[RMDB]
RNA sequence: GGGAACGACUCGAGUAGAGUCGAAAACGUCAGCAGCAAGAUGAGUUCGCUGCGCGCUCCCAUGCGCGUGCUCAUGCGGCAACAUUAGAAGGUCGCUUUAAAAACGAGAUUCUGCCCACCGAGGGGAUGCAUUUACGGUGUUCGCACCGUAAAUGCAAAAAGAAACAACAACAACAAC
Reactivity to 2A3 in 0.01 (KOAc 150mM, MgCl2 10mM, bicine 150mM(pH8.5), 24C), signal-to-noise 1, nucleotides 027 to 126: c050g040u020c040a070g030c010a000g000c020a100a000g090a220u090g020a010g110u160u020c070g030c100u100g000c000g020c030g000c020u030c030c000c000a000u090g010c070g010c020g000u080g050c010u000c000a020u100g020c010g050g000c000a040a020c020a140u100u180a070g100a300a000g090g030u030c020g000c000u110u130u110a080a120a020a010a010c020g010a010g000a150u050u000c000u080g040c100c000c000a100c060c060g080a070g000g000g000g040a020
Reactivity to DMS in 0.01 (KOAc 150mM, MgCl2 10mM, bicine 150mM(pH8.5), 24C), signal-to-noise 1, nucleotides 027 to 126: c110g000u000c050a090g010c030a060g000c010a110a070g010a110u010g000a090g000u000u000c070g030c040u010g000c000g040c060g010c030u000c010c010c040a120u000g000c000g000c010g010u000g030c030u000c150a060u000g040c000g020g030c020a130a110c090a100u000u010a030g000a040a080g040g000u020c020g030c030u000u020u000a030a080a070a120a110c080g000a070g000a120u000u000c000u000g000c030c010c020a100c170c050g000a090g010g030g040g010a140
An RNA of 177 nucleotides, treated with 2A3 and DMS and read out base by base.
The 2A3 profile rests on 918 reads.
For DMS, 1,174 sequencing reads were counted.
For DMS the reverse transcriptase was MarathonRT.
2A3 adducts were read by reverse transcription with SuperScript II with manganese.